Structure probing data (2A3) for a 177-nucleotide construct.
RNA sequence: GGGAACGACUCGAGUAGAGUCGAAAAUGGCGAUUGCACCCCCUACCGUGCUUAUCUCACUGUAUAACAAUUGCUACAUCGAGCAGGCGAUGACAUACUGGAUUGUCAAGAACCAAGGAGUCGCGGCUGGCAGCAGCCGAUUCGUCGGCUGCUGCCAAAAAGAAACAACAACAACAAC
Reactivity to 2A3 in 0.01 (KOAc 150mM, MgCl2 10mM, bicine 150mM(pH8.5), 24C), signal-to-noise 1, nucleotides 027 to 126: u040g010g020c000g000a000u000u140g040c030a050c000c000c000c060c000u020a030c000c000g040u010g010c010u050u190a150u120c040u000c110a000c000u050g070u180a090u090a290a000c010a020a050u070u070g040c000u060a150c000a020u040c030g080a010g000c010a040g040g010c000g100a050u030g080a060c000a090u110a000c100u030g130g000a160u100u120g000u000c030a130a130g000a200a100c030c040a070a040g040g000a000g070u010c000g000c000g000g000c010

Overview
Conditions: 150 mM KOAc, 10 mM MgCl2 and 150 mM bicine (pH 8.5), 24 C. Source: RMDB library OK1LIB, as collected in RNAgym.